[RMDB]
RNA sequence: GGGAACGACUCGAGUAGAGUCGAAAAGUGGCGGCAAGAGUGAUGAUUCAAUUAGAUGUGUGAAAGGAGAUUUCUUCUUUCUGAACUCAAAUCAUUGAGGCAUAUUAAUUUCCUGACUUGCCACCCAUCUGAUGGAUUGCUUCGGCAAUCCAUCAGAAAAAGAAACAACAACAACAAC
Reactivity to DMS in 0.01 (KOAc 150mM, MgCl2 10mM, bicine 150mM(pH8.5), 24C), signal-to-noise 1, nucleotides 027 to 126: g040u030g000g000c040g000g000c010a000a010g000a200g000u080g000a160u000g000a060u000u030c180a070a040u040u010a120g020a110u000g000u030g090u030g000a000a020a000g020g000a040g020a300u040u010u040c000u000u000c000u000u010u000c000u010g010a030a090c010u000c010a050a080a080u000c260a040u000u000g000a030g010g030c110a040u000a040u030u030a030a060u040u000u080c010c030u000g010a090c000u130u000g000c000c000a080c030c000c010a180
Reactivity to 2A3 in 0.01 (KOAc 150mM, MgCl2 10mM, bicine 150mM(pH8.5), 24C), signal-to-noise 3, nucleotides 027 to 126: g090u080g070g050c070g010g020c030a030a000g060a090g030u160g060a070u090g010a060u040u110c020a010a010u000u020a030g030a030u020g010u000g000u000g000a000a000a000g050g040a000g030a070u190u170u060c000u000u000c000u000u000u000c060u030g120a020a000c030u020c000a010a000a180u140c110a120u030u030g010a010g000g020c030a000u140a040u040u190a170a010u040u040u020c000c010u020g130a240c000u010u080g000c000c000a000c000c000c000a070
Chemical mapping of a 177-nucleotide RNA with DMS and 2A3.
It was measured as part of the RMDB library RFM100.
2A3 adducts were read by reverse transcription with SuperScript II with manganese.
The RNA was probed in 150 mM KOAc, 10 mM MgCl2 and 150 mM bicine (pH 8.5) at 24 C.